Source: RMDB library OK1LIB, as collected in RNAgym.
This 177-nucleotide RNA was probed chemically with DMS and 2A3.
The reactions ran in a buffer of 150 mM KOAc, 10 mM MgCl2 and 150 mM bicine (pH 8.5), at 24 C.
For 2A3, 1,096 sequencing reads were counted.
Values cover nucleotides 27 to 126.

RNA sequence: GGGAACGACUCGAGUAGAGUCGAAAAGAAGCGCGCGCCGAAAAUCCGAAAGGAAAUACCCGCCCGAUACGCUUGAGGCGCGCGAAGAGGUGUAAAAGUGCGGGUAAGAAUUGUGUAAAAUCACUAAGGGUAAUGUAUACUUCGGUAUACAUUACCCAAAAGAAACAACAACAACAAC
Reactivity to DMS in 0.01 (KOAc 150mM, MgCl2 10mM, bicine 150mM(pH8.5), 24C), signal-to-noise 1, nucleotides 027 to 126: g000a120a260g000c080g000c020g000c010g040c000c010g040a200a160a170a120u000c060c030g000a120a020a190g050g000a170a030a130u010a020c000c000c040g030c000c120c010g000a210u010a070c060g100c100u000u050g020a160g000g000c000g010c000g000c000g030a000a020g040a120g070g030u000g000u000a080a060a110a060g000u010g000c000g040g000g010u000a060a050g010a110a070u030u010g000u010g000u080a060a050a140a110u000c070a040c150u000a080a220
Reactivity to 2A3 in 0.01 (KOAc 150mM, MgCl2 10mM, bicine 150mM(pH8.5), 24C), signal-to-noise 2, nucleotides 027 to 126: g080a150a110g000c010g000c000g030c000g000c000c000g100a060a080a000a140u090c050c020g000a010a060a000g050g010a000a030a130u030a010c000c020c000g010c000c020c000g090a130u060a190c100g030c040u030u110g060a020g030g010c020g020c010g000c010g000a000a000g010a010g000g000u050g010u120a010a140a120a060g000u010g020c030g010g000g000u010a020a020g000a010a060u110u140g030u000g000u060a040a110a050a050u220c010a000c120u020a050a230